Background: The data come from the RNA Mapping Database (RMDB), library OK2TST. Structure probing data (DMS and 2A3) for a 177-nucleotide construct. Reactivities are rounded to 0.1 and cut off at 0 and 3. Values cover nucleotides 27 to 126. DMS adducts were read by reverse transcription with MarathonRT. For DMS, 9,581 sequencing reads were counted. Conditions: 150 mM KOAc, 10 mM MgCl2 and 150 mM bicine (pH 8.5), 24 C. 2A3 adducts were read by reverse transcription with SuperScript II with manganese.
RNA sequence: GGGAACGACUCGAGUAGAGUCGAAAAUGACCGGAGACGAAGCCCUCGGCAUCGACGUAUUUUUCGAGGCGCUCAAGGCACCGCUUUACUGGAUUGCCACUAACGCCGGGUUGGAUGGCGCGGUGGAGCUAUGAGCAUUAUUCGUAAUGCUCAUAGCAAAAGAAACAACAACAACAAC
Reactivity to DMS in 0.01 (KOAc 150mM, MgCl2 10mM, bicine 150mM(pH8.5), 24C), signal-to-noise 7, nucleotides 027 to 126: u010g010a150c050c000g010g010a080g010a100c080g020a120a140g000c060c020c020u000c060g010g000c140a070u000c040g010a100c140g020u000a050u000u000u000u000u000c020g010a060g010g010c080g010c030u000c090a110a090g010g000c020a070c030c010g000c090u000u000u000a080c140u000g020g010a130u000u010g010c010c000a060c070u000a070a100c050g000c050c060g010g010g010u000u000g010g000a130u010g010g020c030g030c120g010g000u000g010g010a140
Reactivity to 2A3 in 0.01 (KOAc 150mM, MgCl2 10mM, bicine 150mM(pH8.5), 24C), signal-to-noise 4, nucleotides 027 to 126: u140g050a070c030c010g050g030a090g010a020c070g050a070a000g040c000c000c000u000c010g020g010c020a050u050c030g110a100c070g100u160a170u070u160u020u050u070c030g020a020g000g000c050g000c050u030c030a040a070g030g000c030a010c020c020g020c060u120u110u120a110c030u060g020g070a110u140u150g020c000c000a030c040u050a080a010c020g010c030c020g120g000g000u060u090g080g030a110u070g010g010c030g000c010g030g000u040g010g030a040